[RMDB]
RNA sequence: GGGAACGACUCGAGUAGAGUCGAAAAAUGUGCGGCAAAGAAACAUUGUUUAUGCAAAUGCACUUCGCAAUGUGUGCUCAAACAUUGCUUAUUCAAACACGCUUCACAAUGUGCGACAAAGAAACAUAAAACGUUUAGUACUUCGGUACUAAACGAAUCAGAGCUACUACUUCGGUAGUAGCUCUGAAAAAGAAACAACAACAACAAC
Reactivity to DMS in 0.01 (KOAc 150mM, MgCl2 10mM, bicine 150mM(pH8.5), 24C), signal-to-noise 1, nucleotides 027 to 156: a110u030g070u000g050c070g010g040c050a090a130a180g010a170a130a110c050a060u000u000g020u000u010u000a030u020g000c010a070a130a100u000g020c000a120c080u000u010c140g020c040a050a020u000g040u000g000u000g120c090u000c140a090a100a060c000a000u010u000g010c020u020u000a080u000u000c050a130a100a110c040a040c040g020c010u010u010c150a060c130a010a070u000g000u000g000c080g010a300c030a030a050a160g040a190a040a100c070a090u000a090a000a070a180c000g000u000u000u000a000g030u000a000c010u030u020c220g020g000u000a000c020u000a000a000a010c000g000a030a030
Reactivity to 2A3 in 0.01 (KOAc 150mM, MgCl2 10mM, bicine 150mM(pH8.5), 24C), signal-to-noise 3, nucleotides 027 to 156: a000u080g020u070g100c050g020g030c080a140a050a050g070a040a080a040c050a060u020u010g030u060u130u090a140u110g020c020a000a140a050u160g000c000a000c000u040u020c040g000c020a010a000u020g010u000g010u040g020c050u090c170a050a050a000c000a010u010u010g000c000u070u090a100u080u170c030a000a050a020c060a040c080g010c000u020u010c030a020c010a090a050u070g010u030g040c020g040a000c060a010a130a020g060a050a090a000c050a030u210a110a000a050a000c010g000u000u010u000a010g000u000a000c010u020u050c230g050g000u000a000c000u000a000a000a000c000g000a000a000